The record gives the reactivity of an RNA of 177 nucleotides to 2A3 and DMS.
DMS adducts were read by reverse transcription with MarathonRT.
Source: RMDB library OK1LIB, as collected in RNAgym.
High DMS reactivity at an A or C suggests that its Watson-Crick edge is free.
For 2A3 the reverse transcriptase was SuperScript II with manganese.
The RNA was probed in 150 mM KOAc, 10 mM MgCl2 and 150 mM bicine (pH 8.5) at 24 C.

[RMDB]
RNA sequence: GGGAACGACUCGAGUAGAGUCGAAAAUAUUUUAUAUCCAUGUGAUUCACAUCACAGUCAAUAACCCACGAUGUCAAAGAACAAAAGUGUUGGAUCCACUUUUGACAGGUUACCAUGUGCCACAUCGAGAAGACCCCAAAUUCGUUUGGGGUCUUCUAAAAGAAACAACAACAACAAC
Reactivity to 2A3 in 0.01 (KOAc 150mM, MgCl2 10mM, bicine 150mM(pH8.5), 24C), signal-to-noise 1, nucleotides 027 to 126: u090a030u070u150u050u060a070u030a090u080c040c000a080u080g010u000g000a000u140u110c260a190c000a080u000c000a000c000a020g070u070c000a040a200u030a050a050c000c000c000a000c160g010a000u080g050u020c040a100a040a160g040a190a050c000a000a000a000a000g010u000g020u050u150g020g010a010u130c110c010a000c000u000u020u000u010g030a080c010a030g030g000u030u010a130c010c000a110u280g020u170g130c020c000a000c000a020u000c020g020
Reactivity to DMS in 0.01 (KOAc 150mM, MgCl2 10mM, bicine 150mM(pH8.5), 24C), signal-to-noise 2, nucleotides 027 to 126: u030a020u070u030u000u000a030u010a060u020c020c030a160u010g030u000g000a030u000u010c300a090c170a080u000c030a000c000a020g000u050c110a050a010u000a070a060c000c000c000a230c060g050a010u010g000u000c110a020a150a120g050a180a290c100a010a000a000a020g000u000g000u000u010g000g000a050u040c300c010a000c000u000u020u000u000g000a040c060a070g070g050u000u000a070c170c090a040u070g000u020g000c000c110a070c130a000u010c030g010